[RMDB]
RNA sequence: GGGAACGACUCGAGUAGAGUCGAAAAGAUAUGGAAUCGAAGGAGAUGGCUAUCGGAAACGAUAGACCUAAUCUCCCGAUUCCUAAGUCAAAAGUACUUGAUAAGGGUUCGCCCUUAUCAAGUACAACUCACAUACUCCGUUCGCGGAGUAUGUGAGAAAAGAAACAACAACAACAAC
Reactivity to 2A3 in 0.01 (KOAc 150mM, MgCl2 10mM, bicine 150mM(pH8.5), 24C), signal-to-noise 1, nucleotides 027 to 126: g030a020u070a040u180g000g010a000a010u010c030g090a230a160g010g000a000g020a000u030g040g000c010u010a000u010c000g030g030a090a020a000c030g000a010u010a010g130a150c000c010u040a070a060u010c000u000c000c000c010g000a000u000u000c000c000u010a080a000g040u030c050a010a020a070a170g000u010a000c010u020u000g000a000u000a000a010g120g030g000u010u110c250g180c010c000c010u000u000a020u000c000a000a000g000u000a000c000a000a010
Reactivity to DMS in 0.01 (KOAc 150mM, MgCl2 10mM, bicine 150mM(pH8.5), 24C), signal-to-noise 2, nucleotides 027 to 126: g010a030u000a300u000g000g000a030a010u000c000g020a190a100g000g000a000g020a040u000g000g000c000u000a000u000c000g000g000a110a050a160c000g000a040u000a000g000a100c030c010u000a070a060u000c000u000c000c000c000g000a010u000u000c000c000u000a000a090g010u000c010a080a090a070a090g000u010a000c000u000u000g000a020u000a000a000g000g000g050u000u020c300g000c000c000c000u010u000a000u000c000a000a040g000u000a000c010a050a050

Structure probing data (2A3 and DMS) for a 177-nucleotide construct. 2A3 is a SHAPE reagent: it acylates the 2'-hydroxyl of flexible nucleotides of all four kinds. For DMS the reverse transcriptase was MarathonRT. Source: RMDB library TTRDEL, as collected in RNAgym. Values cover nucleotides 27 to 126. Conditions: 150 mM KOAc, 10 mM MgCl2 and 150 mM bicine (pH 8.5), 24 C.